Record summary: The record gives the reactivity of an RNA of 177 nucleotides to 2A3. Reactivities are given for positions 27 through 126. It was measured as part of the RMDB library TTRDES.
RNA sequence: GGGAACGACUCGAGUAGAGUCGAAAAGAUAUGGAUCAGUAGCUCAACAGCCACUACUCGGAAACGAGUAGGUGGACAUGAGCCACUGAUCCUAAGUCAAACCAUCAUUCCUUCGGGAAUGAUGGAAGGACCAGACCAUGUUCGCAUGGUCUGGUCCAAAAGAAACAACAACAACAAC
Reactivity to 2A3 in 0.01 (KOAc 150mM, MgCl2 10mM, bicine 150mM(pH8.5), 24C), signal-to-noise 1, nucleotides 027 to 126: g000a000u020a010u050g000g000a010u000c000a000g020u020a010g000c040u020c080a300a300c130a270g000c000c000a000c010u010a010c000u010c010g000g040a000a010a010c000g000a010g000u040a090g000g180u070g020g010a000c050a300u300g010a010g000c000c000a020c000u000g030a010u000c000c000u010a000a000g000u020c030a000a050a110c000c000a010u040c000a010u000u040c000c020u050u210c300g200g000g000a000a010u010g000a000u030g000g010a060a130
For 2A3, 2,007 sequencing reads were counted.